[RMDB]
Chemical mapping of a 207-nucleotide RNA with DMS and 2A3. The 2A3 profile rests on 534 reads. Reactivities are given for positions 27 through 156. For DMS, 1,589 sequencing reads were counted. The RNA was probed in 150 mM KOAc, 10 mM MgCl2 and 150 mM bicine (pH 8.5) at 24 C.
RNA sequence: GGGAACGACUCGAGUAGAGUCGAAAAAGUACCUAGAUUCAUGUUUGAUUUAAUAACCAGGGGAACGAGAAUCUUGGGUGGAUGACUUUAUAAUUCUGCUUACCACAUUCCUGUCUAUAAACUAAUCUUAAGGUUGGUGGACAGGCCCCUUACAACAUACUCCGUAGUCAUUCGUGACUACGGAGUAAAAAGAAACAACAACAACAAC
Reactivity to DMS in 0.01 (KOAc 150mM, MgCl2 10mM, bicine 150mM(pH8.5), 24C), signal-to-noise 1, nucleotides 027 to 156: a040g000u000a100c020c030u010a080g000a060u000u000c020a100u000g030u000u000u000g020a280u000u000u000a160a200u000a110a040c030c050a140g030g040g010g030a060a070c020g000a220g010a010a020u000c020u000u010g030g020g040u000g020g000a150u000g020a050c100u040u040u000a040u000a180a160u000u000c040u000g040c030u000u000a110c010c000a070c060a150u020u010c010c010u000g010u000c050u020a060u020a100a020a090c020u000a070a080u010c180u040u000a110a140g020g010u020u000g010g190u000g000g010a090c040a000g020g030c020c010c000c040u000u000a000c110a030a110c060a170
Reactivity to 2A3 in 0.01 (KOAc 150mM, MgCl2 10mM, bicine 150mM(pH8.5), 24C), signal-to-noise 2, nucleotides 027 to 156: a010g070u070a050c010c000u030a070g000a030u030u040c040a040u090g090u170u070u150g120a140u110u150u140a200a160u140a050a130c070c070a060g070g000g060g030a070a000c030g010a040g010a200a000u000c000u040u090g000g030g030u040g010g030a040u030g030a040c070u130u140u040a140u140a120a090u050u130c020u030g080c020u040u090a110c070c030a030c080a110u080u130c020c000u000g000u000c020u020a020u160a130a050a070c010u010a000a100u180c080u260u160a160a000g030g000u000u030g000g060u050g020g000a000c010a000g000g000c000c000c000c000u020u060a000c020a080a010c000a030